[RMDB]
The record gives the reactivity of an RNA of 177 nucleotides to DMS and 2A3.
2A3 adducts were read by reverse transcription with SuperScript II with manganese.
For DMS, 7,911 sequencing reads were counted.
For DMS the reverse transcriptase was MarathonRT.
In probing experiments dimethyl sulfate is read out at A N1 and C N3, which are open when not base-paired.
The reactions ran in a buffer of 150 mM KOAc, 10 mM MgCl2 and 150 mM bicine (pH 8.5), at 24 C.
RNA sequence: GGGAACGACUCGAGUAGAGUCGAAAAGCUCGGAGACGAGCAAGGCUGACAAAACGCUGUCCCAACCUCCACGUGGUGUCGGCUGGAUAAUGCUGCAUUAUGUUGCAUUUAUCAACUGGGAACUAAAAGGCAUUAUUACUUUCGAGUAAUAAUGCCUAAAAGAAACAACAACAACAAC
Reactivity to DMS in 0.01 (KOAc 150mM, MgCl2 10mM, bicine 150mM(pH8.5), 24C), signal-to-noise 4, nucleotides 027 to 126: g000c010u010c010g000g000a240g000a180c000g010a010g020c020a170a110g010g010c010u020g020a050c050a050a050a090a080c070g040c110u000g040u000c000c000c010a130a190c080c070u010c040c060a230c060g020u010g000g020u000g000u010c000g000g010c040u000g030g010a010u000a010a010u000g010c010u000g000c000a180u040u030a080u050g020u000u010g010c010a020u010u020u010a010u000c000a120a070c130u010g010g000g010a140a060c080u010a030a080a130
Reactivity to 2A3 in 0.01 (KOAc 150mM, MgCl2 10mM, bicine 150mM(pH8.5), 24C), signal-to-noise 5, nucleotides 027 to 126: g000c000u000c000g050g000a100g040a080c010g000a010g000c000a030a050g030g000c020u030g000a010c040a020a080a060a050c070g030c120u060g070u030c000c000c010a010a030c000c010u080c020c030a100c070g080u100g000g020u030g000u030c010g030g000c010u040g040g000a010u010a040a000u020g020c030u010g010c000a100u130u130a150u300g070u040u000g000c010a030u050u080u090a040u030c020a000a030c050u040g010g000g010a070a120c030u090a070a060a040